RNA sequence: GGGAACGACUCGAGUAGAGUCGAAAAACGUGCGAAAGCACGGUCAGCUCGUGAGGAUAUACAACACUGCUUCGGCGGUGUAUUAAGAUCACAUGAGGAUCACCCAUGUAGAAGGCACGAGCUGAUAAAAUGGACUGCGAUUCGUCGCAGUCCAUUUAAAAGAAACAACAACAACAAC
Reactivity to 2A3 in 0.01 (KOAc 150mM, MgCl2 10mM, bicine 150mM(pH8.5), 24C), signal-to-noise 1, nucleotides 027 to 126: a000c000g010u000g020c000g070a100a010a000g000c000a010c020g010g000u010c020a000g060c030u010c000g000u010g000a000g000g160a160u060a000u000a070c000a010a010c030a040c020u010g010c000u070u100c140g090g010c000g000g000u020g020u000a020u030u120a050a020g000a020u000c010a010c050a160u160g020a200g170g000a010u030c060a110c100c040c000a000u070g000u000a020g000a080a000g100g000c030a000c030g000a000g030c000u000g000a000u010a000
Reactivity to DMS in 0.01 (KOAc 150mM, MgCl2 10mM, bicine 150mM(pH8.5), 24C), signal-to-noise 1, nucleotides 027 to 126: a170c010g070u000g040c000g000a120a080a170g030c000a010c020g000g000u000c030a010g000c010u000c000g010u000g010a010g010g000a100u000a080u000a000c060a070a090c000a000c000u000g000c010u000u000c100g030g010c010g030g010u000g020u000a010u010u010a130a130g010a030u000c010a040c060a110u000g010a090g000g000a050u000c070a170c040c030c040a110u000g000u000a020g000a110a210g000g000c000a000c000g000a000g000c000u010g000a020u000a010